RNA sequence: GGGAACGACUCGAGUAGAGUCGAAAAUAAGCUGACCAGCUAUGAGGUCAUACAUCGUCAUAGAACUAAGAAGAGAGAUCUUCGAGGACAGAGAUGUCCAAGACGACGAGAACAUCGUCGUCGAUACGAACUGGACGAAUUUCGAUUUGUCUAGUUCAAAAGAAACAACAACAACAAC
Reactivity to DMS in 0.01 (KOAc 150mM, MgCl2 10mM, bicine 150mM(pH8.5), 24C), signal-to-noise 8, nucleotides 027 to 126: u040a080a120g010c140u000g000a020c010c010a170g010c010u010a020u020g000a040g000g000u000c030a090u040a090c220a080u020c120g010u000c010a030u000a020g000a010a170c260u040a100a120g000a010a010g000a020g000a140g000a110u000c000u000u000c000g020a120g000g000a010c020a000g000a160g010a100u010g010u010c010c010a110a080g000a010c000g000a000c000g000a010g000a120a070c200a080u000c000g000u000c000g010u000c010g000a090u040a040c200
Reactivity to 2A3 in 0.01 (KOAc 150mM, MgCl2 10mM, bicine 150mM(pH8.5), 24C), signal-to-noise 9, nucleotides 027 to 126: u140a020a020g060c030u010g010a000c000c000a000g000c000u000a010u020g010a000g000g000u010c020a000u120a060c050a080u100c080g050u000c000a010u010a020g020a020a030c040u050a090a020g000a000a000g010a000g000a000g010a040u000c000u010u000c010g010a080g000g000a000c000a000g050a000g010a030u020g000u000c000c000a010a020g000a000c000g000a000c000g000a000g010a050a050c070a110u000c000g000u000c000g000u000c010g000a010u030a060c070
Source information:
An RNA of 177 nucleotides, treated with DMS and 2A3 and read out base by base. It was measured as part of the RMDB library OK1LIB. The DMS profile rests on 23,890 reads. 2A3 is a SHAPE reagent: it acylates the 2'-hydroxyl of flexible nucleotides of all four kinds. For 2A3, 72,786 sequencing reads were counted.